RNA sequence: GGGAACGACUCGAGUAGAGUCGAAAAGAUAUGGAGCCAUGACAUGCUCCGGAUCGGAAACGAUCCGAAGAGCAACAGCAUGCUCCUAAGUCAAACCAUGUUCUGUUGUUCGCAACAGAACAUGGAACGCAGACUUAUUGUUCGCAAUAAGUCUGCGAAAAGAAACAACAACAACAAC
Reactivity to 2A3 in 0.01 (KOAc 150mM, MgCl2 10mM, bicine 150mM(pH8.5), 24C), signal-to-noise 1, nucleotides 027 to 126: g030a010u040a020u190g010g020a020g090c170c030a030u000g000a200c050a100u090g000c000u000c000c000g000g020a000u000c000g020g010a020a060a080c020g000a000u000c010c010g010a220a050g000a000g020c030a020a050c020a120g020c010a000u010g000c000u000c000c000u000a140a020g020u040c000a060a030a050c020c000a010u000g020u010u000c000u020g030u020u010g070u070u120c300g000c170a020a020c010a020g000a000a000c000a000u000g000g000a010a030
Reactivity to DMS in 0.01 (KOAc 150mM, MgCl2 10mM, bicine 150mM(pH8.5), 24C), signal-to-noise 2, nucleotides 027 to 126: g010a010u020a300u010g010g000a020g000c050c040a000u010g000a100c100a200u000g000c000u000c000c010g010g000a010u000c000g020g000a100a040a180c010g000a010u000c010c000g000a100a080g010a020g000c000a030a040c170a160g010c010a020u000g010c000u000c010c000u000a030a070g020u000c020a070a100a300c000c000a010u000g000u000u000c000u000g030u000u000g000u000u010c220g030c020a020a000c020a020g020a010a000c000a000u000g010g010a040a040
Notes: Chemical mapping of a 177-nucleotide RNA with 2A3 and DMS. Conditions: 150 mM KOAc, 10 mM MgCl2 and 150 mM bicine (pH 8.5), 24 C. For DMS the reverse transcriptase was MarathonRT. It was measured as part of the RMDB library TTRDEL.